[RMDB]
RNA sequence: GGGAACGACUCGAGUAGAGUCGAAAAAUGGAUUAACACAUGGCUCACUGUACGUGCCAUGAGCUCGGGAUGAUAGCUGAUCCAAUCCCAUAUACACCUGAAGUCUUGGGGCAGGGGCGGACCACGAGUCAGCGCGCCCCCACAGCACCAGGCUGAAAUCCAUCCACCAGUUCGCUGGUGGAUGGAUAAAAGAAACAACAACAACAAC
Reactivity to 2A3 in 0.01 (KOAc 150mM, MgCl2 10mM, bicine 150mM(pH8.5), 24C), signal-to-noise 1, nucleotides 027 to 156: a010u030g000g030a000u040u030a170a050c030a000c010a180u010g010g000c020u040c140a100c080u220g260u300a010c100g010u030g040c000c000a000u010g000a000g010c030u010c030g110g070g000a150u270g050a090u090a060g000c010u010g010a000u000c010c000a020a040u000c010c000c000a050u020a000u000a030c050a010c010c090u090g190a050a000g030u040c000u070u070g000g000g000g000c000a000g000g020g030g000c030g020g040a000c000c000a070c160g090a200g050u020c010a010g010c020g030c000g000c000c000c000c000c000a110c030a100g000c010a000c030c010a000g000g000c000u000g010a020a030

The record gives the reactivity of an RNA of 207 nucleotides to 2A3. As a SHAPE reagent, 2A3 marks flexible, mostly unpaired nucleotides at the ribose 2'-OH. Reactivities are given for positions 27 through 156. 2A3 adducts were read by reverse transcription with SuperScript II with manganese.